[RMDB]
RNA sequence: GGGAACGACUCGAGUAGAGUCGAAAAGUGCGACAUUUCGAUGUCGCACAAACCCAAAUGGUGGCACCUAACUAAACAAGCCGCGAAAAGCCAGAUGCCAACGUCCUUAGCCCUUCGGGGCUAAGAAUGAAGAUACAACGUUCGCGUUGUAUCUUCAAAAAGAAACAACAACAACAAC
Reactivity to DMS in 0.01 (KOAc 150mM, MgCl2 10mM, bicine 150mM(pH8.5), 24C), signal-to-noise 3, nucleotides 027 to 126: g020u000g010c000g000a010c000a010u000u020u050c200g020a020u000g000u000c010g030c020a000c000a010a060a100c000c010c000a060a130a090u010g020g000u000g000g020c020a060c020c020u000a110a120c140u010a060a130a160c110a060a110g030c020c060g000c060g000a050a050a070a100g010c010c070a050g010a030u000g000c020c020a060a090c100g000u000c120c000u000u000a000g010c000c000c000u000u010c170g050g010g000g010c000u010a010a010g000a070a030
Reactivity to 2A3 in 0.01 (KOAc 150mM, MgCl2 10mM, bicine 150mM(pH8.5), 24C), signal-to-noise 3, nucleotides 027 to 126: g000u010g000c000g030a020c000a000u040u040u120c210g100a020u010g010u000c010g020c010a000c000a000a000a000c020c010c000a010a080a030u150g010g000u030g010g000c040a270c140c010u090a120a160c060u110a130a080a080c070a130a010g040c050c020g010c040g040a080a110a000a010g030c040c030a010g020a070u050g030c020c000a030a020c030g080u020c020c000u000u000a000g010c000c010c020u030u040c270g010g000g020g000c000u000a000a000g000a000a030